[RMDB]
RNA sequence: GGGAACGACUCGAGUAGAGUCGAAAACUCAUCCGCUGGGAUGUACUGACCACCCUGGAGCAUCGAUCUAUCUGAAGCGCGCACGGAUAGGGAGCUCCUGGGUGGGAUGUACAUCCUGUGCUGAAGCGCGCACGGCAACCGAAAGGUGCGAACCUAAUCUUUACAUGCCGUUCGCGGCAUGUAAAGAAAAAGAAACAACAACAACAAC
Reactivity to 2A3 in 0.01 (KOAc 150mM, MgCl2 10mM, bicine 150mM(pH8.5), 24C), signal-to-noise 1, nucleotides 027 to 156: c030u040c030a090u100c020c040g010c030u040g000g000g010a010u020g020u000a000c000u070g300a100c000c000a000c000c010c000u020g000g000a000g000c000a050u300c070g040a030u030c010u000a010u040c000u040g060a280a070g000c010g040c010g000c030a000c000g000g000a000u000a010g010g010g010a030g000c000u020c000c000u000g000g010g000u000g000g000g000a010u030g000u000a000c000a000u000c000c000u010g000u000g000c000u030g000a070a060g000c000g000c000g000c000a020c030g000g020c010a000a010c000c000g140a190a000a030g050g000u020g030c000g020a030a080c010c010u110a220a070